[RMDB]
RNA sequence: GGGAACGACUCGAGUAGAGUCGAAAAUGGCGGACAAUUUUUGUUAUUAUAACAAACAUUAUGAUUGCAUAGAAGGUGCUCCGGCAUGGGCGCAACAAACUUUGCACGCUCACGCCUCUGAUCGCAGAGACUUUUGUUACACGCGCGAGCAAUGGGAGCGUAAAGGUAUGUUCGCAUACCUUUACGCAAAAGAAACAACAACAACAAC
Reactivity to DMS in 0.01 (KOAc 150mM, MgCl2 10mM, bicine 150mM(pH8.5), 24C), signal-to-noise 2, nucleotides 027 to 156: u010g000g000c050g020g030a060c030a070a060u000u010u010u010u010g010u000u000a120u010u010a190u000a020a060c010a120a000a010c120a300u010u000a110u000g000a080u020u000g020c020a140u000a070g010a040a170g030g040u010g010c050u000c030c030g050g020c060a050u000g010g010g040c020g030c050a040a050c070a070a080a050c210u000u000u010g070c090a180c010g010c020u050c050a010c080g000c020c000u000c050u000g010a110u000c130g000c040a080g000a130g020a030c060u000u000u000u010g000u010u000a100c080a100c070g020c030g030c050g000a060g030c020a060a120u030g030g000g000a160
Reactivity to 2A3 in 0.01 (KOAc 150mM, MgCl2 10mM, bicine 150mM(pH8.5), 24C), signal-to-noise 4, nucleotides 027 to 156: u040g030g000c000g010g020a040c020a050a040u010u030u070u020u020g030u030u050a170u170u040a100u160a080a020c050a090a070a000c020a040u060u070a040u160g080a070u060u100g010c030a010u030a170g090a090a020g120g000u020g000c030u020c050c030g060g000c040a040u050g010g020g010c040g000c030a020a040c030a030a120a040c050u110u050u080g010c070a030c090g010c000u020c020a050c030g010c020c030u030c050u050g110a120u120c080g030c120a010g020a010g040a070c010u070u070u070u110g010u080u100a040c060a010c080g010c010g010c030g000a020g000c000a010a060u100g040g010g060a080
This 207-nucleotide RNA was probed chemically with DMS and 2A3.
For DMS, 2,523 sequencing reads were counted.
It was measured as part of the RMDB library OK3TST.
In probing experiments dimethyl sulfate is read out at A N1 and C N3, which are open when not base-paired.
For DMS the reverse transcriptase was MarathonRT.
The RNA was probed in 150 mM KOAc, 10 mM MgCl2 and 150 mM bicine (pH 8.5) at 24 C.